Chemical mapping of a 207-nucleotide RNA with DMS and 2A3.

RNA sequence: GGGAACGACUCGAGUAGAGUCGAAAAUCGAUGGGGCAGGACUGGAUCCUUGAGUAAAUAUCUUAGUUCGAGGAGAAGUUUACAAACGCUCUGCUCAGCCAGUGUUUCAAACUUUCUAAGAUGAACUAAAUGUGCCAGUACCAGAAAUUCCAGGAAACAUAUCCUGGUACUUCGGUACCAGGAUAUGAAAAGAAACAACAACAACAAC
Reactivity to DMS in 0.01 (KOAc 150mM, MgCl2 10mM, bicine 150mM(pH8.5), 24C), signal-to-noise 2, nucleotides 027 to 156: u000c040g000a160u010g010g010g030g070c050a080g000g040a170c030u000g030g020a300u020c000c020u010u000g020a150g020u000a060a060a090u010a090u010c040u000u000a010g020u020u000c030g000a250g010g010a120g010a050a020g020u000u000u020a110c090a060a030a080c010g000c010u010c080u000g020c070u010c060a070g030c040c130a020g000u000g000u010u010u000c030a030a030a030c020u000u000u010c010u000a030a170g020a160u010g010a060a030c060u010a020a040a070u000g010u000g020c000c030a030g020u010a060c000c030a130g020a010a140a170u010u000c000c000a060g060g000a150a100a190
Reactivity to 2A3 in 0.01 (KOAc 150mM, MgCl2 10mM, bicine 150mM(pH8.5), 24C), signal-to-noise 2, nucleotides 027 to 156: u110c050g010a050u100g000g000g000g040c040a040g010g040a030c020u020g010g030a050u080c040c040u050u030g030a030g020u060a020a060a060u040a030u010c050u040u010a020g020u050u030c030g040a040g030g020a050g050a050a020g000u010u010u040a090c130a010a050a030c010g010c030u030c050u090g020c040u130c170a010g070c070c040a000g000u000g020u020u020u030c110a040a030a010c020u090u120u030c020u050a100a020g050a170u120g010a040a020c000u010a060a050a110u040g020u010g080c010c010a000g020u020a240c020c010a020g080a050a080a000u130u010c030c000a000g040g080a000a100a000
Values cover nucleotides 27 to 156. The DMS profile rests on 2,124 reads.